The data come from the RNA Mapping Database (RMDB), library OK3TST. This 207-nucleotide RNA was probed chemically with 2A3 and DMS. For 2A3, 1,892 sequencing reads were counted. The RNA was probed in 150 mM KOAc, 10 mM MgCl2 and 150 mM bicine (pH 8.5) at 24 C. DMS adducts were read by reverse transcription with MarathonRT. Reactivities are given for positions 27 through 156.
RNA sequence: GGGAACGACUCGAGUAGAGUCGAAAAGGCCAUCGUUUUUGCCAGACCAUUUUCGAUGGCCAUAGGUCUGGCUUAUAGUUCAAUCGCCGAGAGGCGUACAGUUAGAGUAGCGAGCUCGAAGCACGCGACCGAUAAGAGCUCGCGAAGGUCGCGGAGACACGAUUUACCUAUUCGUAGGUAAAUCGUGAAAAGAAACAACAACAACAAC
Reactivity to 2A3 in 0.01 (KOAc 150mM, MgCl2 10mM, bicine 150mM(pH8.5), 24C), signal-to-noise 2, nucleotides 027 to 156: g010g000c010c000a030u030c080g110u000u030u060u150u110g000c020c000a000g000a050c030c000a090u070u050u040u070c020g040a020u010g000g020c000c000a030u080a010g000g020u000c010u000g000g000c000u020u060a120u050a020g040u020u080c030a050a070u020c010g000c000c010g020a050g000a020g020g050c000g000u020a010c010a010g040u070u120a040g010a040g060u050a010g000c020g000a000g000c000u030c050g050a140a050g060c060a020c050g070c030g070a070c020c010g010a000u040a140a070g020a000g010c030u030c000g000c000g000a000a000g000g010u040c020g010c020g020g030a040g010a010
Reactivity to DMS in 0.01 (KOAc 150mM, MgCl2 10mM, bicine 150mM(pH8.5), 24C), signal-to-noise 2, nucleotides 027 to 156: g000g010c010c000a040u000c000g020u010u000u000u000u010g040c040c000a160g020a090c020c020a210u010u010u000u010c060g000a040u020g060g010c000c020a040u000a030g020g030u000c040u010g010g000c010u000u000a100u010a160g000u000u010c070a130a200u000c030g030c000c010g000a300g000a290g080g020c020g020u000a060c100a060g030u000u000a080g010a110g010u000a180g000c000g000a010g010c020u000c000g000a140a150g010c050a050c060g020c030g010a080c010c010g000a160u020a130a200g000a050g070c030u000c010g010c000g010a050a110g060g020u000c000g050c020g020g000a200g040a300